[RMDB]
RNA sequence: GGGAACGACUCGAGUAGAGUCGAAAACAGGAGUAAUUCCCGCCGAAACAGGGUUUUCACCCUUCCUUUCUUCGGGUGUCCUUCCUCGCGCCCGCAGGACCACCCCUCGCCCCCUUUGCGCUGUCGCUUCGGCUACUACCCGGUGGAAACAACUGAACAUUACCUAUUCGUUCGCGAAUAGGUAAUGAAAAGAAACAACAACAACAAC
Reactivity to 2A3 in 0.01 (KOAc 150mM, MgCl2 10mM, bicine 150mM(pH8.5), 24C), signal-to-noise 2, nucleotides 027 to 156: c050a010g040g020a020g050u120a090a000u110u090c020c010c000g010c030c010g040a030a030a070c300a140g040g000g060u150u140u290u270c140a060c000c000c020u030u000c020c010u040u040u000c010u060u040c000g030g000g000u030g020u000c000c030u010u020c010c010u040c010g040c020g040c010c040c010g030c060a050g020g060a050c000c000a000c020c040c000c000u000c030g050c000c000c000c000c010u000u050u060g000c030g050c030u070g020u060c000g000c000u040u000c010g040g000c010u090a120c000u010a020c150c010c010g000g000u050g000g000a090a080a020c020a070a030c030u100g010a030a000
Reactivity to DMS in 0.01 (KOAc 150mM, MgCl2 10mM, bicine 150mM(pH8.5), 24C), signal-to-noise 1, nucleotides 027 to 156: c060a070g040g030a070g000u000a060a120u000u000c010c000c030g020c070c070g030a090a080a060c110a070g020g030g000u000u000u000u000c200a160c030c000c010u000u040c070c030u000u000u000c030u000u010c010g000g000g000u010g030u000c020c010u000u000c030c000u010c040g030c050g000c010c000c030g010c100a090g010g000a060c000c040a060c030c000c010c010u010c050g030c020c000c020c020c040u000u010u000g000c080g000c040u000g000u000c030g000c050u000u000c020g040g000c030u000a070c040u010a100c010c010c000g050g000u000g010g010a180a090a030c040a060a290c010u000g010a080a300